Annotation:
This 207-nucleotide RNA was probed chemically with 2A3. The reactions ran in a buffer of 150 mM KOAc, 10 mM MgCl2 and 150 mM bicine (pH 8.5), at 24 C. It was measured as part of the RMDB library OK3TST.
RNA sequence: GGGAACGACUCGAGUAGAGUCGAAAAUCGGCUUGACCGCUUUGGUUUCAGUUUUGGAUUUAGCGCCGCCUUUAGCACUGCCUUUGGUGGUUGUUUUUUCGGUGGUUUCGCUGCCAGCGUCAGCAGAAGUGUUCACCGCGCCGCCUUUCAGUGCUGCGUAAGCAGGCGAAUUCGUUCGCCUGCUUACAAAAGAAACAACAACAACAAC
Reactivity to 2A3 in 0.01 (KOAc 150mM, MgCl2 10mM, bicine 150mM(pH8.5), 24C), signal-to-noise 2, nucleotides 027 to 156: u050c000g030g000c030u060u050g030a030c020c020g090c240u210u110u190g030g000u020u090u120c080a090g010u020u040u100u270g090g000a110u100u040u120a040g000c040g030c030c020g140c050c040u100u170u160a000g000c000a000c010u010g040c070c000u100u070u160g050g000u000g010g000u050u040g040u060u250u020u010u020u170c020g000g000u010g010g050u010u020u060c020g000c030u020g040c000c110a180g060c170g100u220c000a000g000c070a060g030a040a000g040u050g100u270u270c000a000c010c000g000c020g000c010c000g000c000c000u040u040u100c020a000g000u000g030c020u010g030c020